[RMDB]
RNA sequence: GGGAACGACUCGAGUAGAGUCGAAAAGUAUAGAAGCAUGAGACCGCAUGCGAUAUACGAUGAAUCACGGUCGAAUCCGUUGUGCGAAAGCACUUCGGUAAUGCAUAUCGGUAGGCAGAUCAGCCCGGAUCAGCUACCGUAAUUAGUACGGGCAAGAACCGUAGUACGUAUUCGUACGUACUACGGUAAAAGAAACAACAACAACAAC
Reactivity to DMS in 0.01 (KOAc 150mM, MgCl2 10mM, bicine 150mM(pH8.5), 24C), signal-to-noise 1, nucleotides 027 to 156: g020u000a110u000a170g030a120a190g010c030a030u000g030a250g010a070c030c030g000c030a030u000g010c060g000a210u000a080u010a050c130g000a250u000g020a060a140u030c070a060c080g030g000u000c000g010a140a150u000c050c010g020u000u000g010u000g030c010g020a130a110a200g010c020a010c000u000u000c010g000g000u000a060a010u000g010c020a170u000a130u000c000g010g040u000a010g070g000c060a130g020a090u000c070a210g000c040c000c030g000g000a160u000c030a180g020c030u020a010c000c000g000u010a040a100u000u010a150g000u000a130c010g000g070g000c030a130a080g010a060
Reactivity to 2A3 in 0.01 (KOAc 150mM, MgCl2 10mM, bicine 150mM(pH8.5), 24C), signal-to-noise 2, nucleotides 027 to 156: g030u020a000u020a090g050a210a020g020c000a000u000g040a010g040a120c000c010g020c050a010u040g060c010g000a020u010a000u000a060c090g040a100u180g190a100a080u130c040a010c060g000g000u050c060g010a000a020u060c000c000g000u000u010g020u000g000c020g070a050a010a000g010c000a000c000u000u000c000g000g000u020a030a010u080g010c050a010u070a090u190c000g010g000u010a000g160g120c040a010g010a000u000c000a010g010c000c000c000g000g030a000u010c030a020g050c000u000a000c000c000g030u040a040a020u120u030a030g070u070a080c000g010g000g060c000a000a000g060a030
Description:
Chemical mapping of a 207-nucleotide RNA with DMS and 2A3. For DMS the reverse transcriptase was MarathonRT. Values are in units of 0.01, from 0 to 300, in steps of 10. The reactions ran in a buffer of 150 mM KOAc, 10 mM MgCl2 and 150 mM bicine (pH 8.5), at 24 C.